[RMDB]
RNA sequence: GGGAACGACUCGAGUAGAGUCGAAAAAGGGUGAGGCUCCCCAGCACGAUGUCUUCCAUGCUAUAGACCGUAUAUUCGAACAACCUCUGACACUCAGAGAUCUGAUUUUAGCCCGAGCUAUCAGCGACCCAAGUUGAGAAUUCGUUCUCAACUUGGGAAAAGAAACAACAACAACAAC
Reactivity to 2A3 in 0.01 (KOAc 150mM, MgCl2 10mM, bicine 150mM(pH8.5), 24C), signal-to-noise 1, nucleotides 027 to 126: a000g050g000g000u040g030a040g000g040c030u040c010c000c000c020a010g020c020a010c050g050a060u050g020u040c000u030u010c040c040a080u140g030c030u100a060u040a160g030a070c010c020g030u040a090u030a050u150u130c020g030a100a020c000a030a060c000c010u000c020u020g030a020c030a030c230u090c010a020g020a000g000a070u010c060u070g070a110u020u040u050u160a030g020c020c000c050g020a030g000c020u040a030u190c040a020g010c000g040a050
Reactivity to DMS in 0.01 (KOAc 150mM, MgCl2 10mM, bicine 150mM(pH8.5), 24C), signal-to-noise 3, nucleotides 027 to 126: a080g010g000g020u010g010a060g000g000c040u000c030c010c010c060a100g000c060a090c080g030a140u000g010u000c050u000u010c040c010a070u000g010c050u010a060u010a060g010a090c030c030g020u000a090u010a120u000u000c080g000a050a070c090a080a080c060c000u000c010u010g010a190c150a080c200u000c030a060g000a070g000a050u010c030u000g000a070u000u000u010u000a150g000c070c050c010g020a090g000c060u010a030u000c080a050g010c150g000a240